[RMDB]
Description
An RNA of 177 nucleotides, treated with 2A3 and DMS and read out base by base. Values cover nucleotides 27 to 126. The 2A3 profile rests on 6,284 reads. In probing experiments dimethyl sulfate is read out at A N1 and C N3, which are open when not base-paired. Conditions: 150 mM KOAc, 10 mM MgCl2 and 150 mM bicine (pH 8.5), 24 C. For DMS the reverse transcriptase was MarathonRT. For DMS, 3,857 sequencing reads were counted. For 2A3 the reverse transcriptase was SuperScript II with manganese. Reactivities are rounded to 0.1 and cut off at 0 and 3.
RNA sequence: GGGAACGACUCGAGUAGAGUCGAAAAGAUUCAGAUUCAAUAAACUCAAUAUGGUCUUCAGUAGAAGAUAAAGGAAUUGAAAAGUUCAAAAAUGCAGGAUUAAACUCUGGUAGAAGUCCAUAUUCUACCUAUCCGAUAUAUUCGUAUAUCGGAUAGGAAAAGAAACAACAACAACAAC
Reactivity to 2A3 in 0.01 (KOAc 150mM, MgCl2 10mM, bicine 150mM(pH8.5), 24C), signal-to-noise 7, nucleotides 027 to 126: g050a010u200u200c130a060g120a190u100u070c080a050a120u200a200a170a100c050u070c070a020a020u040a020u070g010g000u040c000u000u000c010a060g050u140a050g130a140a010g020a040u090a030a130a050g100g020a020a010u040u030g050a100a090a070a030g030u040u020c080a140a080a030a060a020u140g070c050a020g000g100a030u100u140a080a090a080c060u030c010u060g060g060u090a040g000a030a000g010u000c000c000a000u010a040u080u030c020u030a070
Reactivity to DMS in 0.01 (KOAc 150mM, MgCl2 10mM, bicine 150mM(pH8.5), 24C), signal-to-noise 3, nucleotides 027 to 126: g030a120u030u000c090a050g000a120u050u020c030a050a050u070a100a090a120c080u010c050a060a060u000a030u020g000g000u000c010u000u000c000a180g030u060a080g010a020a100g000a060u020a080a120a120g010g000a010a040u000u000g000a090a040a130a060g030u000u000c020a020a070a100a060a120u040g000c070a040g010g000a080u020u020a080a070a160c100u000c030u000g000g000u030a050g000a010a070g010u010c050c010a050u000a020u000u020c080u000a080